Conditions: 150 mM KOAc, 10 mM MgCl2 and 150 mM bicine (pH 8.5), 24 C.
Structure probing data (DMS and 2A3) for a 177-nucleotide construct.
For 2A3 the reverse transcriptase was SuperScript II with manganese.
RNA sequence: GGGAACGACUCGAGUAGAGUCGAAAAGCUAGCAUCUAAGUGGAUGCAGCAAUCAGGUUUAAGCCAACGAGUAAGCAAGCUACUGAUAGGGGAAGCAAUACCUCCAAUGUGAUGCACUUUCUCGAGGAAUUACAUAGAUAUUCGUAUCUAUGUAAUUAAAAGAAACAACAACAACAAC
Reactivity to DMS in 0.01 (KOAc 150mM, MgCl2 10mM, bicine 150mM(pH8.5), 24C), signal-to-noise 9, nucleotides 027 to 126: g010c010u000a130g020c000a000u000c000u000a160a150g040u060g000g000a010u000g010c000a020g000c010a120a100u020c140a090g010g000u000u010u010a080a090g000c010c020a100a150c040g010a000g000u000a010a040g000c070a070a120g000c010u010a040c020u000g000a220u030a150g000g000g000g000a100a090g010c230a080a110u030a080c030c010u000c000c030a040a150u010g000u000g000a070u020g000c030a160c030u000u000u000c000u000c010g010a180g000g010
Reactivity to 2A3 in 0.01 (KOAc 150mM, MgCl2 10mM, bicine 150mM(pH8.5), 24C), signal-to-noise 5, nucleotides 027 to 126: g000c000u050a020g000c000a010u000c010u050a190a050g090u110g140g000a000u000g000c000a000g000c000a000a040u060c030a020g060g010u020u020u070a020a010g020c000c000a020a040c010g000a000g000u010a010a000g000c070a030a000g000c000u010a000c000u010g020a030u070a030g000g000g000g000a030a000g060c050a030a040u030a070c000c000u000c000c010a020a020u030g020u010g040a300u070g000c000a000c000u000u000u000c000u000c000g010a010g000g050